Chemical mapping of a 177-nucleotide RNA with 2A3 and DMS. The DMS profile rests on 2,100 reads.

RNA sequence: GGGAACGACUCGAGUAGAGUCGAAAAAGCUCUUCUGUGCACAGCCCCUCCCAGGCGAGCUGACGCAGGAAGAAGAGGGAAAGCUUUGUGUGGGCAUAGCGCUUGUCCCAGCGAGCCCACGGGACAGGACAUUGCUUGAGUUCGCUCAAGCAAUGUCAAAAGAAACAACAACAACAAC
Reactivity to 2A3 in 0.01 (KOAc 150mM, MgCl2 10mM, bicine 150mM(pH8.5), 24C), signal-to-noise 2, nucleotides 027 to 126: a000g030c040u030c020u010u010c000u000g030u010g010c030a010c010a010g020c000c000c000c000u010c040c060c000a000g000g040c130g020a070g000c010u020g020a010c010g010c000a000g000g020a020a000g030a020a020g040a100g020g060g000a090a160a040g030c030u140u190u090g190u070g020u010g020g000g000c080a080u060a110g220c040g000c000u000u050g010u040c000c000c000a000g000c000g010a000g000c010c000c000a000c020g000g000g000a030c060a060g140
Reactivity to DMS in 0.01 (KOAc 150mM, MgCl2 10mM, bicine 150mM(pH8.5), 24C), signal-to-noise 2, nucleotides 027 to 126: a080g000c070u000c010u000u000c010u000g000u010g000c000a090c000a010g010c020c010c020c020u000c120c110c130a160g020g010c290g010a110g010c010u000g020a050c030g010c000a000g030g000a050a020g000a060a070g000a060g010g000g010a090a070a070g020c090u000u010u000g020u000g050u000g000g010g020c030a070u010a150g010c020g010c010u000u000g020u000c000c000c000a160g010c000g030a140g000c010c000c000a000c040g010g010g000a070c130a140g010